[RMDB]
RNA sequence: GGGAACGACUCGAGUAGAGUCGAAAAUGCAUGUCUAAGUACACACGAAUUAAAAGUGAAACCGCAAAAGGCUCAUUAUAUCAGUUAUGGUUCCUUAGAUCGUUAACAGUUACUUGGAUAAUUGUGGUCAACAUUAGGGAUUCGUCCCUAAUGUUGAAAAAGAAACAACAACAACAAC
Reactivity to 2A3 in 0.01 (KOAc 150mM, MgCl2 10mM, bicine 150mM(pH8.5), 24C), signal-to-noise 9, nucleotides 027 to 126: u160g000c020a020u020g000u000c010u020a020a000g020u030a000c030a000c000a000c040g040a090a090u130u080a170a180a030a000g070u080g140a150a010a020c010c010g040c090a060a080a030a070g080g000c010u010c070a060u080u260a130u080a100u260c060a020g020u070u090a120u240g010g000u010u030c000c000u030u030a060g010a090u030c020g020u040u110a090a060c030a080g010u090u020a010c000u020u020g010g000a020u040a090a100u190u070g020u030g030g050
Reactivity to DMS in 0.01 (KOAc 150mM, MgCl2 10mM, bicine 150mM(pH8.5), 24C), signal-to-noise 9, nucleotides 027 to 126: u040g010c040a030u010g010u000c010u000a000a010g010u000a030c080a130c150a030c020g010a040a090u030u010a060a070a050a030g000u030g010a070a030a040c010c010g010c240a080a070a100a130g010g010c060u000c160a070u020u030a080u020a140u020c220a050g010u010u000a070u020g010g010u000u000c020c010u000u000a140g000a050u000c020g000u000u010a050a070c220a080g000u020u000a000c010u010u000g000g000a020u000a020a080u010u010g010u000g000g010

This 177-nucleotide RNA was probed chemically with 2A3 and DMS. The reactions ran in a buffer of 150 mM KOAc, 10 mM MgCl2 and 150 mM bicine (pH 8.5), at 24 C. For DMS the reverse transcriptase was MarathonRT. For 2A3 the reverse transcriptase was SuperScript II with manganese.